Structure probing data (DMS and 2A3) for a 177-nucleotide construct.
For DMS the reverse transcriptase was MarathonRT.
The RNA was probed in 150 mM KOAc, 10 mM MgCl2 and 150 mM bicine (pH 8.5) at 24 C.
For 2A3, 28,069 sequencing reads were counted.
The data come from the RNA Mapping Database (RMDB), library TTRDEL.

RNA sequence: GGGAACGACUCGAGUAGAGUCGAAAAGAUAUGGACGGGCAAGGGAGCGAAAUCGGAAACGAUGUCGCAUCGAUCUUGCCGUCCUAAGUCAAACAAUGCCUUUGAUCUUCGGAUCAAAGGCAUUGAACAUCCUUAAUACGUUCGCGUAUUAAGGAUGAAAAGAAACAACAACAACAAC
Reactivity to DMS in 0.01 (KOAc 150mM, MgCl2 10mM, bicine 150mM(pH8.5), 24C), signal-to-noise 9, nucleotides 027 to 126: g000a030u010a300u010g000g010a010c010g020g010g010c000a010a010g000g010g000a040g020c010g010a010a040a010u000c000g010g000a100a090a150c000g010a010u000g000u000c000g020c000a240u000c130g010a070u010c000u000u000g010c000c000g010u000c000c000u000a010a060g000u000c020a130a100a240c010a010a000u000g000c000c000u000u000u000g000a010u000c000u000u010c200g010g000a010u000c010a000a000a000g000g000c000a000u000u000g000a090a220
Reactivity to 2A3 in 0.01 (KOAc 150mM, MgCl2 10mM, bicine 150mM(pH8.5), 24C), signal-to-noise 6, nucleotides 027 to 126: g030a010u050a040u130g030g000a020c120g070g110g190c010a010a000g020g030g000a020g010c000g010a040a020a030u010c010g020g030a050a030a030c020g010a010u030g040u070c010g000c030a260u260c030g090a100u030c010u000u000g010c000c010g000u000c000c000u000a030a010g040u000c010a040a080a080c000a000a020u000g000c000c000u000u020u000g000a000u000c020u060u100c300g150g000a000u000c000a000a000a000g000g010c000a000u000u000g000a000a000